[RMDB]
RNA sequence: GGGAACGACUCGAGUAGAGUCGAAAACUCUUUUACUCGGCAUGAUGCCACCGUUAUCGGGUCAACAGAGUAGUUGCAAAUGACAACAAUGCUCAGGGUUAUGCUCUCGCUGCCUAAUGGCGGUGCGCGGACGACUCAAUGUUCGCAUUGAGUCGAAACCCAGUCAUUCGUUCGCGAAUGACUGGGUAAAAGAAACAACAACAACAAC
Reactivity to 2A3 in 0.01 (KOAc 150mM, MgCl2 10mM, bicine 150mM(pH8.5), 24C), signal-to-noise 2, nucleotides 027 to 156: c000u000c000u000u020u040u000a060c040u020c010g010g000c200a090u130g020a050u170g110c060c000a000c030c030g000u000u020a000u090c080g020g040g070u090c030a050a040c030a110g000a000g000u070a030g030u020u200g070c060a050a160a270u210g030a120c000a020a000c030a080a300u120g010c010u040c120a060g030g000g110u220u090a070u110g020c000u000c020u000c110g070c210u070g000c010c000u010a050a000u070g000g050c050g000g000u000g030c090g000c000g030g030a020c010g010a000c000u000c010a010a010u020g040u030u040c070g000c120a010u000u000g000a000g080u000c010g000a010a010